RNA sequence: GGGAACGACUCGAGUAGAGUCGAAAAUGAUGUGUGAACUGUCUCGGGAGGAUGCCCCUGUGCGCUGGUACAAGGAUGGGCUGGAAGUGGAGGAGAGCGAGGCCCUGGUGCUGGAGAGGGAUGGGCCCGCGUUACUUCAUUUCGAUGAAGUAACGCGAAAAGAAACAACAACAACAAC
Reactivity to DMS in 0.01 (KOAc 150mM, MgCl2 10mM, bicine 150mM(pH8.5), 24C), signal-to-noise 3, nucleotides 027 to 126: u000g000a050u000g030u010g010u010g010a090a090c070u000g010u000c020u000c090g020g000g010a120g020g010a120u000g010c030c020c030c040u000g000u000g010c040g010c150u000g000g030u000a040c080a080a090g000g010a120u000g010g010g020c060u000g000g010a080a090g030u010g010g000a080g000g000a080g010a110g010c080g000a110g000g010c020c020c010u000g010g020u000g010c070u000g000g000a110g010a140g000g000g010a050u010g010g010g020c030c050
Reactivity to 2A3 in 0.01 (KOAc 150mM, MgCl2 10mM, bicine 150mM(pH8.5), 24C), signal-to-noise 2, nucleotides 027 to 126: u170g020a050u060g100u000g020u030g080a070a050c030u050g030u070c030u020c030g040g000g010a050g030g020a030u080g030c010c000c000c000u040g040u030g030c050g000c160u130g060g030u080a040c030a080a010g040g020a070u080g000g000g040c030u030g050g030a080a030g010u040g060g080a060g000g040a080g010a020g060c030g010a030g000g000c010c020c010u050g020g000u140g020c060u050g000g030a080g010a060g050g010g030a030u040g010g010g000c020c010